[RMDB]
RNA sequence: GGGAACGACUCGAGUAGAGUCGAAAAUUGAUAUCUGCUAAAACCCGGUGCAUUCAUCACUGCAGGUUAAGCCAAAGGGAUGUCCCGACCGGAGGCCGACAAUCCAGGGAACCGGAUGUCAUCACGUAAAACCGUCAGUUCUUCGGAACUGACGGAACAUGACCAAACCGUUCGCGGUUUGGUCAUGAAAAGAAACAACAACAACAAC
Reactivity to 2A3 in 0.01 (KOAc 150mM, MgCl2 10mM, bicine 150mM(pH8.5), 24C), signal-to-noise 1, nucleotides 027 to 156: u060u020g020a020u020a020u110c000u050g040c090u050a100a030a030a200c010c070c030g060g020u010g000c100a170u060u210c070a170u160c010a050c010u100g000c050a060g010g050u000u080a050a000g000c000c000a020a000a010g020g000g000a000u070g040u000c010c000c000g020a000c000c000g000g020a000g000g000c000c000g000a000c030a170a130u000c060c080a010g000g000g110a040a050c100c000g080g000a050u100g060u100c040a040u100c040a030c100g070u050a000a100a000a000c000c000g000u000c000a000g030u000u020c000u010u160c250g020g020a000a000c000u000g000a000c000g000g000a000a000
The record gives the reactivity of an RNA of 207 nucleotides to 2A3. It was measured as part of the RMDB library M2RFPK. For 2A3, 474 sequencing reads were counted. Conditions: 150 mM KOAc, 10 mM MgCl2 and 150 mM bicine (pH 8.5), 24 C.